[RMDB]
RNA sequence: GGGAACGACUCGAGUAGAGUCGAAAAUUGCCAUCAAAACCAUCCUCACAGACCCUUCUGAAACCACUUCUAGGAAGGGAAAUCACAAUGGAUCCAUGAAGGAUGCUUUCUGGAUGACUUUAAAAGACCAAUUAUACGACUUCGGUCGUAUAAUUGGAAAAGAAACAACAACAACAAC
Reactivity to DMS in 0.01 (KOAc 150mM, MgCl2 10mM, bicine 150mM(pH8.5), 24C), signal-to-noise 2, nucleotides 027 to 126: u000u000g010c000c020a050u000c030a080a040a070a070c280c040a020u000c040c020u010c030a060c090a170g010a100c000c000c020u010u010c110u000g040a050a140a170c050c110a080c060u020u010c030u000a190g010g010a010a000g010g010g000a040a040a110u000c100a050c160a120a080u030g020g000a120u000c020c020a150u010g000a130a040g020g000a030u000g010c160u000u000u000c140u000g010g030a020u000g050a020c060u000u020u000a040a070a070a120g000a210
Reactivity to 2A3 in 0.01 (KOAc 150mM, MgCl2 10mM, bicine 150mM(pH8.5), 24C), signal-to-noise 1, nucleotides 027 to 126: u030u020g030c000c000a010u010c010a020a000a000a070c010c010a010u010c000c040u060c020a010c010a060g100a180c020c010c000u000u000c010u020g050a090a060a050c090c060a200c090u140u090c090u120a030g000g020a010a000g000g000g000a010a010a020u050c020a030c030a020a100u160g070g010a020u020c070c010a070u130g030a060a010g060g000a010u050g040c030u070u080u040c040u060g080g000a040u020g050a070c010u170u130u140a090a200a030a010g050a020